[RMDB]
The record gives the reactivity of an RNA of 207 nucleotides to 2A3.
The data come from the RNA Mapping Database (RMDB), library RNAMAK.
Conditions: 150 mM KOAc, 10 mM MgCl2 and 150 mM bicine (pH 8.5), 24 C.
RNA sequence: GGGAACGACUCGAGUAGAGUCGAAAACUGUAUCACACUUCGGUGUGAUACAGCAUUAACCUUUGUGCAGCUUUUGACGAAUGCCAGGCCCAUUGGGCUGGUGAAUUCGAUAAGCUGCACUCUGGUAAACUGACUCCCUCAUUCGUGAGGGAGUCAAUGAACACUUCCGGUUCGCCGGAAGUGUUCAAAAAGAAACAACAACAACAAC
Reactivity to 2A3 in 0.01 (KOAc 150mM, MgCl2 10mM, bicine 150mM(pH8.5), 24C), signal-to-noise 1, nucleotides 027 to 156: c000u000g000u000a000u020c000a000c000a000c000u020u120c200g050g000u000g020u000g000a000u000a000c000a000g000c010a000u170u220a190a040c000c000u000u000u000g000u000g030c030a020g010c000u090u000u170u200g260a070c070g020a030a010u040g090c000c000a040g180g260c020c000c070a140u300u300g040g000g010c010u050g000g000u010g120a120a090u010u000c000g000a000u000a090a000g000c000u000g000c000a000c000u000c000u010g000g000u000a120a000a000c110u030g010a000c000u020c020c000c000u010c000a050u130u190c150g140u030g020a000g010g000g010a000g000u000c000a000a000